[RMDB]
RNA sequence: GGGAACGACUCGAGUAGAGUCGAAAAGAUAUGGAGCGGCAAUGGAGAUCCUCGGAAACGAGAAGAUCGAUGAAGUUGCGCUCCUAAGUCAAAUCGUUAACAUGGCGUUCGCGCCAUGUUAACGAAACAAUUACCUCGUCUUCGGACGAGGUAAUUGAAAAGAAACAACAACAACAAC
Reactivity to DMS in 0.01 (KOAc 150mM, MgCl2 10mM, bicine 150mM(pH8.5), 24C), signal-to-noise 3, nucleotides 027 to 126: g010a050u000a300u010g000g000a020g030c000g050g050c000a000a010u000g000g010a050g000a000u000c010c010u000c000g020g010a120a060a220c000g010a010g000a150a090g020a000u000c000g010a070u010g010a140a200g000u000u000g020c010g000c010u000c000c000u000a000a040g000u000c040a090a080a140u000c000g000u000u000a010a010c000a010u000g010g000c000g000u000u020c270g030c010g000c000c000a000u000g000u000u000a000a000c000g000a010a040a140
Reactivity to 2A3 in 0.01 (KOAc 150mM, MgCl2 10mM, bicine 150mM(pH8.5), 24C), signal-to-noise 2, nucleotides 027 to 126: g050a010u040a030u150g010g000a000g000c130g300g140c170a010a030u030g020g010a020g000a010u020c000c000u000c000g050g030a080a070a060c040g000a000g060a300a110g000a060u010c030g090a190u040g000a010a000g010u030u000g020c000g000c000u010c000c000u010a110a010g030u030c020a010a030a210u040c000g000u000u010a010a000c000a010u010g000g000c040g020u090u090c300g000c010g000c120c000a000u010g000u000u010a000a000c000g000a000a000a000